[RMDB]
RNA sequence: GGGAACGACUCGAGUAGAGUCGAAAAGCAGGUCAGCUUGGGUCACUUGGCUCCAGAGCCCAACCCCAGCCUGCCUUUCCAACUUCUGGAAGCACAGUGACACUGCAGCUGGGGUCUCCAGACCUGAGAUCCGGUAGACGUUCGCGUCUACCGGAUCAAAAGAAACAACAACAACAAC
Reactivity to 2A3 in 0.01 (KOAc 150mM, MgCl2 10mM, bicine 150mM(pH8.5), 24C), signal-to-noise 1, nucleotides 027 to 126: g140c030a000g000g000u020c000a000g040c000u000u040g030g030g000u030c010a080c300u140u300g000g010c010u000c040c010a020g020a040g110c000c010c000a010a030c000c010c000c000a000g020c000c040u030g030c050c030u030u060u040c000c000a050a090c110u300u240c070u070g000g010a050a000g040c040a030c040a180g090u120g150a060c080a070c220u130g020c000a030g000c000u000g030g000g020g010u000c000u000c010c020a030g000a050c000c000u110g040a140
Reactivity to DMS in 0.01 (KOAc 150mM, MgCl2 10mM, bicine 150mM(pH8.5), 24C), signal-to-noise 2, nucleotides 027 to 126: g020c020a010g000g000u000c010a200g010c090u000u000g010g000g000u010c040a110c150u010u000g000g010c060u000c080c090a050g010a240g020c120c040c030a250a040c000c020c130c020a080g010c110c040u010g020c030c240u000u000u000c000c020a120a220c300u000u020c130u000g020g000a090a040g000c140a250c030a000g000u000g000a100c130a230c090u010g000c110a050g020c000u040g020g020g000g000u000c000u000c040c140a120g030a020c120c000u020g000a150